[RMDB]
RNA sequence: GGGAACGACUCGAGUAGAGUCGAAAACGCAGUGCGUCGUGCAGGUCACGGCUGCGGUUGGACGUGAGCACCGCGAUCGGCGGGCACUCCGCGAGGAAAGUGCCCAGCUCGGGAACGGUCACCGCGGACAGGCUGUAAAAUUCGUUUUACAGCCUGUAAAAGAAACAACAACAACAAC
Reactivity to 2A3 in 0.01 (KOAc 150mM, MgCl2 10mM, bicine 150mM(pH8.5), 24C), signal-to-noise 6, nucleotides 027 to 126: c030g000c020a020g030u120g140c050g090u110c020g020u100g020c060a110g110g140u210c020a010c020g010g010c000u040g000c000g020g000u050u100g060g020a020c020g010u060g030a030g030c140a010c010c000g000c000g020a040u050c010g000g010c000g000g010g000c000a000c000u010c010c010g020c060g030a090g010g010a110a210a050g000u000g000c000c000c000a030g010c080u190c020g000g000g010a020a020c000g000g000u020c020a030c050c030g010c010g000g000
Reactivity to DMS in 0.01 (KOAc 150mM, MgCl2 10mM, bicine 150mM(pH8.5), 24C), signal-to-noise 6, nucleotides 027 to 126: c030g020c060a030g030u010g020c060g010u010c020g010u000g000c050a130g000g010u040c040a040c030g000g000c000u000g010c010g000g020u020u020g000g000a090c030g010u000g020a190g020c300a020c010c020g010c060g000a300u060c000g000g000c020g000g000g010c000a010c000u000c000c000g000c300g010a210g000g000a050a080a060g020u000g000c000c000c010a090g020c010u050c020g020g000g000a200a110c010g010g000u000c040a160c060c020g000c040g000g000